[RMDB]
RNA sequence: GGGAACGACUCGAGUAGAGUCGAAAAUUUUUCUAGCCAACUCCAAGUUCUCGAGUUGAUCAUUGUUUGUAUUCUUGAGACAUUAUUUGGGGACGAGAUGUUUUGUUGACUCGAUAUAAGAAGGGGCCAAAGAAUCGUUUUUCGAAACGAUUCUUUGAAAAGAAACAACAACAACAAC
Reactivity to 2A3 in 0.01 (KOAc 150mM, MgCl2 10mM, bicine 150mM(pH8.5), 24C), signal-to-noise 4, nucleotides 027 to 126: u130u070u000u010u000c050u060a100g050c030c040a050a060c020u000c010c010a060a060g010u180u020c010u010c040g040a040g030u020u060g100a130u080c080a140u040u240g130u300u210u080g060u040a100u020u040c000u000u020g020a020g000a010c020a050u070u100a070u040u110u040g010g000g010g000a010c040g060a020g010a030u080g040u020u020u050u030g050u030u090g010a010c010u000c010g020a040u030a000u060a180a060g090a050a030g030g000g010g000c010
Reactivity to DMS in 0.01 (KOAc 150mM, MgCl2 10mM, bicine 150mM(pH8.5), 24C), signal-to-noise 5, nucleotides 027 to 126: u020u020u020u010u010c010u010a190g020c060c040a060a160c030u010c020c050a040a080g010u030u000c020u010c000g000a030g010u000u010g000a120u040c050a050u020u030g010u020u020u010g030u010a100u010u000c000u000u000g000a050g030a040c170a140u020u030a090u020u000u000g000g010g000g000a090c110g010a060g020a050u020g000u000u000u000u000g000u000u000g000a070c010u020c020g000a120u030a090u030a090a060g010a110a100g000g000g000g000c140